[RMDB]
RNA sequence: GGGAACGACUCGAGUAGAGUCGAAAACGCAUCAUCAACACCGCAUCAGGUCAGGCGCGAGACGGCUUCAUCUACACGCCUCACUAUGCAGCCUCGAAGAUGGGGGUCGUCGGGAUCACCCAAAGCCCCGCAGGAGGACUUUCGAGUCCUCCUGCGGAAAAGAAACAACAACAACAAC
Reactivity to 2A3 in 0.01 (KOAc 150mM, MgCl2 10mM, bicine 150mM(pH8.5), 24C), signal-to-noise 2, nucleotides 027 to 126: c050g030c030a060u020c000a010u040c030a030a050c050a050c130c000g040c050a040u030c000a010g000g200u050c010a000g000g010c000g010c020g000a000g030a040c070g070g010c020u270u090c130a180u000c080u190a060c060a000c110g000c000c000u040c030a070c040u160a160u300g000c000a000g000c030c030u020c090g010a070a000g030a050u060g000g000g000g000g200u010c030g000u030c060g050g000g000a050u080c050a240c000c000c010a060a000a000g000c000c020